Chemical mapping of a 207-nucleotide RNA with 2A3 and DMS.
The reactions ran in a buffer of 150 mM KOAc, 10 mM MgCl2 and 150 mM bicine (pH 8.5), at 24 C.
DMS adducts were read by reverse transcription with MarathonRT.
Reactivities are given for positions 27 through 156.

RNA sequence: GGGAACGACUCGAGUAGAGUCGAAAAGGGGUCAGCUUCUCAGUACGUGGUUGUCAGCGUACCAUGGCUGAAGCCUCCACGGCCAUGGACGCUUGGAUUUACCACGGAACCGAAGCUGACGGAGGCACCCAAAGUUGUAGUCUUCGGACUACAACAAGUUUACAACAGAGUUCGCUCUGUUGUAAACAAAAGAAACAACAACAACAAC
Reactivity to 2A3 in 0.01 (KOAc 150mM, MgCl2 10mM, bicine 150mM(pH8.5), 24C), signal-to-noise 5, nucleotides 027 to 156: g150g010g020g000u000c000a000g000c000u010u010c000u010c000a000g000u000a000c000g000u000g000g010u020u030g030u040c020a010g000c000g010u050a300c010c000a010u000g010g020c000u020g040a080a010g030c020c010u000c020c010a040c010g010g000c000c000a000u000g000g000a000c000g000c000u020u110g050g010a030u190u070u250a010c000c000a000c000g010g000a000a000c000c000g010a000a000g000c000u000g000a000c000g000g000a000g000g010c020a070c030c010c000a060a090a010g010u010u000g000u000a000g000u000c010u020u050c300g080g000a000c000u000a000c000a000a000c000a000a000
Reactivity to DMS in 0.01 (KOAc 150mM, MgCl2 10mM, bicine 150mM(pH8.5), 24C), signal-to-noise 2, nucleotides 027 to 156: g020g030g010g020u000c010a050g010c010u000u000c030u000c040a110g050u010a170c020g020u000g020g040u000u000g000u000c050a090g010c000g030u000a050c010c010a020u010g020g030c000u010g010a020a120g000c070c020u000c020c070a300c020g020g050c000c000a060u000g000g000a070c020g010c010u010u000g010g010a090u010u010u000a030c010c000a030c000g010g010a060a100c180c300g000a020a030g010c020u000g030a040c040g000g010a000g030g020c020a150c010c000c020a060a050a170g010u000u000g020u000a010g010u000c000u000u010c300g050g010a060c000u000a000c000a010a010c000a040a110